Structure probing data (2A3 and DMS) for a 177-nucleotide construct. DMS (dimethyl sulfate) methylates the pairing face of unpaired adenines and cytosines. The data come from the RNA Mapping Database (RMDB), library OK1LIB. Reactivities are given for positions 27 through 126. For 2A3, 1,530 sequencing reads were counted.
RNA sequence: GGGAACGACUCGAGUAGAGUCGAAAAGAAAAAGACGUGGAAGUACAGAACGGCAAAUGUACUGAGUUACGAAAGUAACGAAGAGAUGACUGAAUGCCGUAAAAGUCUUCUCUGACACGUCGAAAAAGGGAUUAAUUAGCUUCGGCUAAUUAAUCCCAAAAGAAACAACAACAACAAC
Reactivity to 2A3 in 0.01 (KOAc 150mM, MgCl2 10mM, bicine 150mM(pH8.5), 24C), signal-to-noise 2, nucleotides 027 to 126: g140a000a060a000a000a000g010a000c000g000u000g010g000a000a010g000u000a000c000a020g090a270a090c000g010g030c040a130a110a140u120g000u000a000c000u030g010a010g030u000u000a000c010g060a070a070a000g000u000a000a020c000g000a030a020g000a000g000a000u010g020a010c000u060g060a230a110u300g020c020c000g000u010a020a050a000a080g000u000c000u000u000c000u000c000u000g000a010c000a000c000g000u010c020g000a030a000a000a010a010
Reactivity to DMS in 0.01 (KOAc 150mM, MgCl2 10mM, bicine 150mM(pH8.5), 24C), signal-to-noise 2, nucleotides 027 to 126: g000a070a030a060a140a170g000a000c000g000u020g070g040a100a010g000u000a000c000a130g030a100a160c010g000g040c010a070a060a230u020g040u000a020c000u100g000a300g020u000u010a070c000g000a190a010a120g000u000a000a000c000g000a280a030g060a000g000a000u000g000a010c010u010g010a080a100u000g000c000c020g000u000a080a030a050a000g000u000c000u000u000c000u000c050u000g000a140c010a000c000g000u010c010g000a010a040a030a080a090